RNA sequence: GGGAACGACUCGAGUAGAGUCGAAAACUUGUAAUUGCAAAGCGUGGUUUUAAUACCACUAUGCAAGCCAAGUCUAAGUCGCUGAACAUCUAUAAUGUAUUAGGCAUCAGGUAAGUACACAAUUCUCAUUAAUAGUUACAUUCGUGUAACUAUUAAUAAAAGAAACAACAACAACAAC
Reactivity to DMS in 0.01 (KOAc 150mM, MgCl2 10mM, bicine 150mM(pH8.5), 24C), signal-to-noise 9, nucleotides 027 to 126: c010u000u000g000u010a220a100u000u000g000c000a010a070a160g030c300g010u000g000g010u000u000u020u030a100a120u030a020c000c000a000c000u000a200u000g000c000a000a010g010c270c010a010a010g010u000c070u010a070a080g010u000c040g010c010u000g000a050a070c120a120u010c050u010a040u010a070a110u020g010u020a080u010u010a060g010g010c230a100u000c030a020g000g000u000a020a050g010u010a020c060a060c190a070a140u000u000c010u000c040
Reactivity to 2A3 in 0.01 (KOAc 150mM, MgCl2 10mM, bicine 150mM(pH8.5), 24C), signal-to-noise 9, nucleotides 027 to 126: c010u010u020g030u090a080a160u030u010g000c010a020a030a060g150c100g040u010g010g070u020u040u120u200a220a150u230a070c000c000a000c000u010a020u010g000c000a000a000g020c030c000a010a000g000u000c020u070a080a050g040u040c020g020c100u030g030a050a020c020a050u030c040u090a080u080a200a200u200g110u110a120u070u040a040g040g000c020a030u020c010a020g020g040u080a070a030g070u080a030c070a000c010a060a110u050u000c020u000c010

The record gives the reactivity of an RNA of 177 nucleotides to DMS and 2A3. DMS adducts were read by reverse transcription with MarathonRT. The data come from the RNA Mapping Database (RMDB), libraries RFM100 and RFMREP. Reactivities are rounded to 0.1 and cut off at 0 and 3. For 2A3 the reverse transcriptase was SuperScript II with manganese. The reactions ran in a buffer of 150 mM KOAc, 10 mM MgCl2 and 150 mM bicine (pH 8.5), at 24 C.